[RMDB]
RNA sequence: GGGAACGACUCGAGUAGAGUCGAAAAUUACUGUUCGCAGUAACUGUAACCUUUGUGCAUAGUCACUAUAGGGAGCCUGACACGACCCAUUGGGUCGUGGAGGGCAUCGAUCUAUAGAAGUCUAUGCACUCUGGUGGGUAACCUUAUUCGUAAGGAACUGCACCGUAUAAUUCGUUAUACGGUGCAGAAAAGAAACAACAACAACAAC
Reactivity to DMS in 0.01 (KOAc 150mM, MgCl2 10mM, bicine 150mM(pH8.5), 24C), signal-to-noise 1, nucleotides 027 to 156: u000u000a010c000u000g020u000u030c180g100c000a050g000u000a000a050c040u000g020u000a100a080c010c000u030u000u000g010u030g060c000a020u010a060g020u000c010a300c000u000a000u000a030g010g010g020a030g000c000c010u000g020a300c000a010c020g020a080c020c010c100a300u020u020g090g020g000u000c020g020u010g020g000a300g010g020g030c000a000u000c100g000a080u010c020u000a020u000a000g000a070a170g020u000c000u000a030u010g000c000a000c000u020c020u010g020g100u040g000g010g010u000a140a060c000c000u010u020a130u000u000c200g020u010a020a030g000g020a150a300
Reactivity to 2A3 in 0.01 (KOAc 150mM, MgCl2 10mM, bicine 150mM(pH8.5), 24C), signal-to-noise 2, nucleotides 027 to 156: u050u010a000c010u030g040u100u170c300g020c090a010g000u060a040a040c050u160g130u190a030a060c000c020u000u000u000g000u030g010c000a000u000a000g010u020c000a010c170u000a000u020a000g000g000g010a000g000c000c010u050g000a030c000a000c000g000a010c010c010c180a300u150u300g000g020g000u010c000g000u010g020g010a020g020g000g000c000a010u210c010g000a020u020c000u000a000u010a020g080a210a020g040u060c000u000a000u030g000c000a000c000u010c010u000g000g000u040g010g010g040u120a070a060c010c000u040u050a050u110u190c150g110u130a030a020g100g050a080a070